[RMDB]
RNA sequence: GGGAACGACUCGAGUAGAGUCGAAAAGAGUGAUCCGGUGCCACGCGGCCUCAUACGACGCCGGUGUGUCGUCGACGAUGGCGCUCACCGCCGCGGCGGCCUGCUUGACGGCAAGGCUGAUGCCUUCGCAGGAAACCAAGUUCGCUUGGUUUCCUGCAAAAGAAACAACAACAACAAC
Reactivity to 2A3 in 0.01 (KOAc 150mM, MgCl2 10mM, bicine 150mM(pH8.5), 24C), signal-to-noise 1, nucleotides 027 to 126: g070a000g050u050g020a110u030c080c060g030g070u050g000c040c000a030c020g050c000g030g030c010c010u060c060a130u130a200c100g040a030c040g170c000c030g000g000u020g020u000g020u060c050g020u040c020g040a120c100g090a130u300g020g000c000g000c020u000c000a030c000c000g000c080c040g010c000g040g020c000g020g000c010c000u020g010c000u020u200g050a040c080g000g030c030a040a010g030g000c030u090g070a120u230g000c060c000u080u010c070
Reactivity to DMS in 0.01 (KOAc 150mM, MgCl2 10mM, bicine 150mM(pH8.5), 24C), signal-to-noise 2, nucleotides 027 to 126: g010a080g000u000g020a110u000c020c040g010g000u000g020c050c020a080c050g020c070g020g010c000c020u000c050a070u000a290c070g020a060c120g000c070c000g000g010u010g030u020g020u000c030g000u000c000g000a090c250g010a100u000g000g000c030g000c030u000c020a090c030c000g000c130c100g020c060g000g000c060g000g000c010c000u000g020c060u000u020g020a140c190g000g000c030a040a070g000g000c030u000g020a180u010g000c030c040u010u020c120
Description: The data come from the RNA Mapping Database (RMDB), library OK2TRN. Chemical mapping of a 177-nucleotide RNA with 2A3 and DMS. For 2A3, 1,474 sequencing reads were counted. For DMS the reverse transcriptase was MarathonRT. The DMS profile rests on 1,792 reads. For 2A3 the reverse transcriptase was SuperScript II with manganese.